[RMDB]
RNA sequence: GGGAACGACUCGAGUAGAGUCGAAAACGCCGGCUCGUCAGCGACCGCCUCGCGAAUGACAGCGUUCACUGAGCCGCCGCAAACCACUAACCAUGGUCAGUUGGGGGCCCAGUCCUCCGCCGUCGCACUCAUCAGAGCUAUUCGUAGCUCUGAUGAGAAAAGAAACAACAACAACAAC
Reactivity to DMS in 0.01 (KOAc 150mM, MgCl2 10mM, bicine 150mM(pH8.5), 24C), signal-to-noise 2, nucleotides 027 to 126: c070g030c100c070g000g000c030u000c050g000u000c050a090g040c020g000a090c090c080g000c090c070u000c060g020c080g000a110a100u020g020a040c040a070g010c020g010u000u000c130a130c010u010g020a050g010c010c010g000c060c020g030c040a080a100a120c030c000a060c040u000a080a110c250c120a300u000g030g010u000c080a190g030u000u010g040g010g010g000g020c000c040c010a020g000u000c000c000u010c080c020g000c030c050g030u000c080g000c080a200
Reactivity to 2A3 in 0.01 (KOAc 150mM, MgCl2 10mM, bicine 150mM(pH8.5), 24C), signal-to-noise 2, nucleotides 027 to 126: c000g040c040c000g060g000c020u040c070g080u070c080a020g050c010g050a040c010c050g030c020c030u070c050g010c010g130a190a130u190g010a040c030a030g000c020g030u070u050c020a020c050u030g000a020g020c040c060g120c050c010g020c030a120a060a020c010c000a010c010u030a020a010c010c000a030u020g000g030u050c030a030g010u200u300g050g000g020g000g010c000c040c030a010g040u070c000c000u070c010c030g000c040c020g060u030c030g000c020a050